RNA sequence: GGGAACGACUCGAGUAGAGUCGAAAAGUGUUGGUUACACAAAAGAAGGUAGUGUGAUUAACUUCUGUUAUAUGCAUCAAAUGGAGUUAGCUAAUGGUACACAUACCGGCUCUGCAUUUGAUGGUACUCUGACAGGGUAGUUCGCUACCCUGUCAGAAAAAGAAACAACAACAACAAC
Reactivity to 2A3 in 0.01 (KOAc 150mM, MgCl2 10mM, bicine 150mM(pH8.5), 24C), signal-to-noise 2, nucleotides 027 to 126: g030u030g000u000u040g010g060u030u010a010c000a000c010a010a070a060a030g300a070a080g060g110u130a090g020u030g000u000g020a020u010u010a010a030c000u070u070c030u030g090u130u010a170u010a020u160g180c010a000u010c010a020a000a000u020g080g000a020g000u200u120a000g080c000u090a220a130u180g010g010u050a030c240a000c040a190u100a010c010c020g020g020c020u020c000u020g020c000a010u000u000u000g000a020u000g040g010u010a040c090
Reactivity to DMS in 0.01 (KOAc 150mM, MgCl2 10mM, bicine 150mM(pH8.5), 24C), signal-to-noise 2, nucleotides 027 to 126: g020u000g000u000u010g010g000u000u000a040c020a010c000a090a110a150a190g020a140a090g000g010u000a080g020u000g010u030g010a020u000u010a030a040c010u000u000c030u010g000u010u010a120u020a080u010g020c000a020u000c000a020a000a030u000g010g000a020g030u010u020a020g010c010u010a090a140u010g030g030u010a050c300a090c270a150u010a040c020c000g000g000c000u010c030u010g010c000a000u020u010u000g000a020u000g010g020u010a010c220